[RMDB]
Chemical mapping of a 207-nucleotide RNA with DMS and 2A3.
The 2A3 profile rests on 1,967 reads.
Reactivities are rounded to 0.1 and cut off at 0 and 3.
2A3 adducts were read by reverse transcription with SuperScript II with manganese.
DMS adducts were read by reverse transcription with MarathonRT.

RNA sequence: GGGAACGACUCGAGUAGAGUCGAAAAGCCGGGUUCGCCCGGCAUAUCGCGUACUACCUAGCAAUGACGUGUGUUGGCCCAGACAGAUGUCCCAAAUAGGACAUUCGAGCCACACAUAAGACAGCUAGGUAUCGCCCAUAUGGUGCUUCGGCACCAAACAGAUAAUAAGCUUCGGCUUAUUAUCUGUAAAAGAAACAACAACAACAAC
Reactivity to DMS in 0.01 (KOAc 150mM, MgCl2 10mM, bicine 150mM(pH8.5), 24C), signal-to-noise 1, nucleotides 027 to 156: g050c030c000g000g020g020u000u010c300g000c030c000c000g080g040c000a010u000a010u000c060g030c080g020u000a100c120u000a000c000c000u000a050g000c020a180a060u000g000a160c160g010u000g010u000g000u010u010g020g030c000c040c000a190g040a130c210a200g000a030u010g000u000c000c010c040a090a120a170u000a080g000g010a020c000a010u000u000c040g000a070g000c000c000a040c000a070c000a010u000a020a140g010a260c040a130g010c020u000a060g000g050u010a010u000c020g010c000c020c030a170u030a130u000g010g040u000g030c000u010u010c240g020g030c000a010c020c050a010a040
Reactivity to 2A3 in 0.01 (KOAc 150mM, MgCl2 10mM, bicine 150mM(pH8.5), 24C), signal-to-noise 3, nucleotides 027 to 156: g020c000c010g020g020g040u060u070c250g150c020c000c000g000g030c010a010u040a010u050c040g010c010g030u040a100c040u020a000c050c000u010a010g010c090a220a300u100g030a050c110g000u010g000u000g070u210u260g020g000c020c070c020a030g040a050c060a050g100a030u010g000u030c000c010c030a200a300a190u290a150g010g020a000c010a000u110u130c050g020a030g000c000c000a000c010a000c000a000u030a040a030g100a040c020a030g060c010u000a020g000g010u000a010u000c000g000c000c020c000a110u120a160u070g000g000u000g010c000u040u020c220g070g010c000a000c000c000a000a020